[RMDB]
RNA sequence: GGGAACGACUCGAGUAGAGUCGAAAAUAAAUGGAUUUAAUAGAUGAAGUCACGUCAACUAUUCCUCCUUUGGAUAAUGAUACUCACAAAGGACAAGCUGGUAGAAUCGGCAUAUUCGGUGGCUCCGCAUUCAACACGCGUUCGCGCGUGUUGAAUGAAAAGAAACAACAACAACAAC
Reactivity to 2A3 in 0.01 (KOAc 150mM, MgCl2 10mM, bicine 150mM(pH8.5), 24C), signal-to-noise 4, nucleotides 027 to 126: u200a000a080a040u090g040g060a060u110u180u240a100a080u030a090g100a120u100g110a050a020g010u080c020a000c080g040u010c020a020a050c070u040a030u030u030c000c000u000c000c020u030u010u020g010g010a020u060a190a070u240g150a040u120a120c100u080c030a150c000a100a030a020g000g010a000c000a020a040g010c000u060g000g110u120a010g100a120a050u090c020g000g000c010a030u010a030u180u110c040g010g010u000g010g000c010u050c000c000g020
Reactivity to DMS in 0.01 (KOAc 150mM, MgCl2 10mM, bicine 150mM(pH8.5), 24C), signal-to-noise 2, nucleotides 027 to 126: u040a020a090a020u030g000g020a150u020u000u000a100a020u020a030g020a100u030g000a030a080g020u000c090a050c060g000u000c030a070a030c050u030a040u010u030c050c130u000c000c010u020u000u000g010g000a090u020a140a080u020g010a160u070a070c170u000c070a080c000a000a020a010g030g000a060c190a050a080g000c070u010g020g000u000a080g010a090a050u030c050g000g040c000a040u020a020u010u030c030g010g000u000g030g000c000u000c010c030g030
Source information:
An RNA of 177 nucleotides, treated with 2A3 and DMS and read out base by base. For DMS, 2,434 sequencing reads were counted. Source: RMDB library OK1LIB, as collected in RNAgym. Conditions: 150 mM KOAc, 10 mM MgCl2 and 150 mM bicine (pH 8.5), 24 C.